[RMDB]
This 177-nucleotide RNA was probed chemically with DMS.
RNA sequence: GGGAACGACUCGAGUAGAGUCGAAAAGAUAUGGAAAGUGUGGAGUGAUAGUUGCCCACCUGGAGUAUAAUCGGAAACGAUUAUACUCCAGGUGUGCAACAAUCACUAUGAAGCACUUUCCUAAGUCCCUAGCAUAUCUCUUCGGAGAUAUGCUAGGAAAAGAAACAACAACAACAAC
Reactivity to DMS in 0.01 (KOAc 150mM, MgCl2 10mM, bicine 150mM(pH8.5), 24C), signal-to-noise 1, nucleotides 027 to 126: g000a060u000a300u010g000g000a020a010a010g000u000g010u000g010g010a010g020u000g020a030u000a020g030u000u000g000c000c030c000a020c000c000u000g000g030a040g000u000a000u010a000a000u000c010g020g010a230a150a290c000g000a020u000u010a010u000a000c000u000c020c000a000g000g020u000g040u000g000c000a010a000c000a020a000u000c000a000c000u010a150u000g000a200a300g000c000a000c000u000u000u000c010c000u000a010a100g010u000c030
Source information:
DMS adducts were read by reverse transcription with MarathonRT. Reactivities are given for positions 27 through 126.